[RMDB]
RNA sequence: GGGAACGACUCGAGUAGAGUCGAAAAGACGCCUAAUGGCGAAAAUGUAAAAUCAACUACACAGUAGAUAAAUACAAGUGCUAAAUCUCGAAACUAGUUGAUCUAGUCCAGCGGUGAGAUCCGCAGAAUACGCAUCAGCAUUCGUGCUGAUGCGUAUAAAAGAAACAACAACAACAAC
Reactivity to DMS in 0.01 (KOAc 150mM, MgCl2 10mM, bicine 150mM(pH8.5), 24C), signal-to-noise 1, nucleotides 027 to 126: g050a250c000g000c070c000u000a130a220u050g000g020c000g010a030a150a120a050u040g000u000a020a080a110a000u000c000a000a000c000u000a040c110a030c130a110g000u060a120g000a010u000a050a080a080u000a050c180a050a130g000u000g000c160u000a000a060a050u020c000u000c120g050a050a120a110c260u000a010g000u000u000g000a020u010c090u000a080g010u020c020c050a040g000c030g020g040u010g000a140g020a020u030c000c010g020c040a050g000a180
Reactivity to 2A3 in 0.01 (KOAc 150mM, MgCl2 10mM, bicine 150mM(pH8.5), 24C), signal-to-noise 2, nucleotides 027 to 126: g000a000c000g040c000c010u190a150a090u300g010g000c050g060a170a000a000a000u250g000u260a020a020a020a010u000c000a000a010c000u000a000c160a010c000a130g150u180a000g100a020u090a080a120a000u240a010c090a300a000g080u040g090c040u170a030a050a100u030c000u000c060g030a070a050a050c020u000a060g000u040u010g000a040u000c050u140a050g070u030c000c000a000g000c000g000g010u010g030a030g000a070u100c020c000g010c000a000g040a000

About this RNA: Conditions: 150 mM KOAc, 10 mM MgCl2 and 150 mM bicine (pH 8.5), 24 C. Chemical mapping of a 177-nucleotide RNA with DMS and 2A3. For 2A3 the reverse transcriptase was SuperScript II with manganese. Values cover nucleotides 27 to 126.